An RNA of 177 nucleotides, treated with DMS and read out base by base. Values cover nucleotides 27 to 126. Source: RMDB library OK2TRN, as collected in RNAgym. The reactions ran in a buffer of 150 mM KOAc, 10 mM MgCl2 and 150 mM bicine (pH 8.5), at 24 C.
[RMDB]
RNA sequence: GGGAACGACUCGAGUAGAGUCGAAAAGGCAGGAGGCUAGGCUACCAGCGGGCAUGGCAACCCUCCCACCCUCGUAGACCACAACCGGCUCGUCGCCACAAACAUCGUCGCAUGUGAGUGUCUCGCCAAAUGGACCCUACUUCGGUAGGGUCCAUUUAAAAGAAACAACAACAACAAC
Reactivity to DMS in 0.01 (KOAc 150mM, MgCl2 10mM, bicine 150mM(pH8.5), 24C), signal-to-noise 2, nucleotides 027 to 126: g030g000c160a060g050g020a130g020g010c050u010a130g010g020c000u000a070c090c030a130g030c070g010g000g020c080a090u030g040g010c020a100a080c220c010c030u000c000c010c020a100c140c020c010u000c060g000u000a110g000a090c050c020a050c070a090a020c140c030g030g010c050u010c030g020u010c140g000c090c000a060c050a060a100a010c030a030u000c060g000u000c130g020c070a050u000g000u010g000a110g040u010g000u000c040u010c090g020c040c090